The record gives the reactivity of an RNA of 207 nucleotides to 2A3. Values are in units of 0.01, from 0 to 300, in steps of 10.

[RMDB]
RNA sequence: GGGAACGACUCGAGUAGAGUCGAAAAUGUAUGGCAAAGUAAUAGGCCACCGAUUCCAAUGGAUCUUCAUUGUUAAAAAUUGUCCAAUGGUUGCAGAAACGCGUAAAAACUUUGGGCAACAGUCUAGUGUACGGUUCGCAUUUUGUCGACACUGCCACGAUAUCACCCUCUUCGGAGGGUGAUAUCGAAAAGAAACAACAACAACAAC
Reactivity to 2A3 in 0.01 (KOAc 150mM, MgCl2 10mM, bicine 150mM(pH8.5), 24C), signal-to-noise 1, nucleotides 027 to 156: u060g010u090a090u030g000g000c040a220a000a030g030u150a070a180u090a140g040g090c020c020a000c020c020g160a190u120u000c000c030a010a030u090g000g040a140u100c020u170u100c070a160u090u120g080u080u130a000a020a000a120a120u040u000g000u000c000c000a030a000u120g060g000u010u120g030c030a020g280a290a020a020c060g000c020g070u210a010a010a010a010a010c020u010u020u000g000g010g040c020a020a040c020a020g100u050c190u210a040g050u020g040u140a070c030g000g150u000u000c040g000c070a010u080u000u000u000g010u000c000g000a000c000a000c030u020g010c000c030a050
Source: RMDB library OK3TST, as collected in RNAgym.
For 2A3 the reverse transcriptase was SuperScript II with manganese.